Overview:
The record gives the reactivity of an RNA of 207 nucleotides to 2A3. The data come from the RNA Mapping Database (RMDB), library OK3TST. 2A3 adducts were read by reverse transcription with SuperScript II with manganese.
RNA sequence: GGGAACGACUCGAGUAGAGUCGAAAAGUCGUGGAUGACGUGGCGUCGCCGGUUGGCCACAUAACUGCGGUGCUCUUCCAGCAGCUGCGCGUUCGGGACCUGGACGAGCUCGGGCGGGGUGAGUAUCUCCGAGGAGGACGACCUGGGGCCGGGGUGGGCCUAAGUCCUAAUUCGUUAGGACUUAGGCAAAAGAAACAACAACAACAAC
Reactivity to 2A3 in 0.01 (KOAc 150mM, MgCl2 10mM, bicine 150mM(pH8.5), 24C), signal-to-noise 2, nucleotides 027 to 156: g040u050c100g160u070g040g050a100u060g040a220c100g000u030g010g010c040g020u180c110g040c000c010g030g000u000u050g020g000c050c010a000c010a070u300a290a010c090u090g060c050g060g000u040g000c030u040c020u090u050c010c020a000g000c010a020g010c020u070g030c050g030c090g060u110u060c040g030g100g030a010c000c030u030g020g050a040c000g010a070g000c010u010c000g000g020g000c060g060g000g000g000u070g040a040g030u100a150u070c110u030c040c050g040a090g090g030a010g020g000a030c030g040a060c000c050u080g000g000g000g000c070c000g020g000g020g030u090g000g020
The reactions ran in a buffer of 150 mM KOAc, 10 mM MgCl2 and 150 mM bicine (pH 8.5), at 24 C.